[RMDB]
RNA sequence: GGGAACGACUCGAGUAGAGUCGAAAAAGGCACGACAGCGUGCGUAGCAAACAGGAUUAGAUACCCUGGUAGUGCACGCCAUAAACGGUGGGCCAUAGGUGUGGGUUCCUACCACGGGAUCUGUGCCAAUAUAAAUGAUAUUCGUAUCAUUUAUAUUAAAAGAAACAACAACAACAAC
Reactivity to 2A3 in 0.01 (KOAc 150mM, MgCl2 10mM, bicine 150mM(pH8.5), 24C), signal-to-noise 9, nucleotides 027 to 126: a000g020g000c010a010c020g040a030c030a020g020c030g030u020g000c010g020u040a030g060c020a010a020a030c000a000g010g010a020u040u060a050g050a100u190a150c010c000c000u010g020g030u050a050g030u020g060c000a000c000g000c000c010a080u170a030a110a010c050g010g010u040g010g010g020c000c010a010u020a040g080g010u080g030u020g040g010g010u040u080c000c000u010a060c010c010a010c030g030g010g010a030u000c020u060g010u010g000c000c000
Reactivity to DMS in 0.01 (KOAc 150mM, MgCl2 10mM, bicine 150mM(pH8.5), 24C), signal-to-noise 9, nucleotides 027 to 126: a080g010g000c000a030c020g010a090c130a170g000c050g020u010g000c020g010u020a140g010c120a070a100a190c020a010g000g000a050u010u010a140g000a160u070a110c130c000c000u000g000g000u020a090g010u020g000c000a010c000g000c000c110a130u030a070a090a090c110g000g010u010g010g000g000c000c000a010u000a010g000g000u010g010u000g000g000g000u000u000c010c000u000a020c010c010a020c110g000g000g000a060u010c030u020g010u000g000c000c010